[RMDB]
RNA sequence: GGGAACGACUCGAGUAGAGUCGAAAACAUUUUGUCCAAUCGACAAUCCAAAUGUCGCAGCGAAAUUGGCAAUACCUUCUGGCACGCCUAGACGUCUUGUUUGUGUUUGUACAUUCAAUGGUAAGGCACGAUCUUAGCUGUUCGCAGCUAAGAUCGUAAAAGAAACAACAACAACAAC
Reactivity to 2A3 in 0.01 (KOAc 150mM, MgCl2 10mM, bicine 150mM(pH8.5), 24C), signal-to-noise 4, nucleotides 027 to 126: c050a070u090u050u040u080g090u030c010c000a040a100u100c040g000a020c080a090a050u020c100c090a160a070a110u090g020u000c000g020c050a080g080c060g110a030a040a050u110u050g000g000c020a040a040u080a100c010c000u080u040c030u030g100g010c100a030c030g010c000c000u040a070g050a120c020g080u030c030u090u050g030u080u020u020g050u020g090u080u150u250g080u050a010c020a020u000u000c000a000a110u180g050g050u130a010a060g040g040c010
Reactivity to DMS in 0.01 (KOAc 150mM, MgCl2 10mM, bicine 150mM(pH8.5), 24C), signal-to-noise 2, nucleotides 027 to 126: c150a100u010u040u040u000g050u030c000c020a050a000u030c080g000a000c030a010a130u030c140c160a090a100a140u010g000u000c020g000c300a020g010c110g000a030a100a080u000u040g000g000c030a030a060u000a070c070c050u000u000c060u030g000g000c100a030c140g000c010c000u000a040g030a070c100g000u020c050u000u000g060u000u010u000g020u000g000u000u030u030g000u050a080c010a040u030u000c020a090a050u020g010g000u000a080a090g000g000c100

An RNA of 177 nucleotides, treated with 2A3 and DMS and read out base by base. 2A3 adducts were read by reverse transcription with SuperScript II with manganese. It was measured as part of the RMDB library OK1LIB. The DMS profile rests on 2,300 reads. The RNA was probed in 150 mM KOAc, 10 mM MgCl2 and 150 mM bicine (pH 8.5) at 24 C.